RNA sequence: GGGAACGACUCGAGUAGAGUCGAAAACAGUGACCAGGAGUUCACUCUGCCUUGAGCUUCCGUCAGGUGAGCUCGGUGAGAUGGCCUGGUUGCUGAAGACGCCAUAUUCCGUCUCCCUUUACCGAUGGCAUCCCCAGUAUUUCGAUACUGGGGAUGCAAAAGAAACAACAACAACAAC
Reactivity to DMS in 0.01 (KOAc 150mM, MgCl2 10mM, bicine 150mM(pH8.5), 24C), signal-to-noise 1, nucleotides 027 to 126: c000a000g010u020g000a000c000c030a000g030g010a090g000u000u010c000a000c040u000c000u000g010c000c000u030u020g000a000g000c000u000u000c000c000g000u010c300a040g000g000u060g000a020g000c010u000c030g000g050u000g030a000g050a000u000g000g010c010c060u000g000g000u000u000g000c000u000g030a020a030g000a030c090g010c220c110a040u010a040u020u000c140c000g020u050c020u000c000c000c040u000u020u020a080c070c110g000a160u090g000
Reactivity to 2A3 in 0.01 (KOAc 150mM, MgCl2 10mM, bicine 150mM(pH8.5), 24C), signal-to-noise 6, nucleotides 027 to 126: c010a000g000u000g000a000c000c000a000g010g010a010g020u300u300c000a000c000u010c000u000g000c000c010u060u300g010a000g000c000u040u020c020c030g220u230c100a090g000g070u140g070a000g010c010u010c000g000g000u170g000a010g000a000u010g010g010c000c000u010g000g000u010u000g010c000u000g010a000a010g030a000c000g040c050c030a140u080a140u250u060c030c010g000u000c030u040c000c000c000u010u090u020a130c070c090g070a090u120g060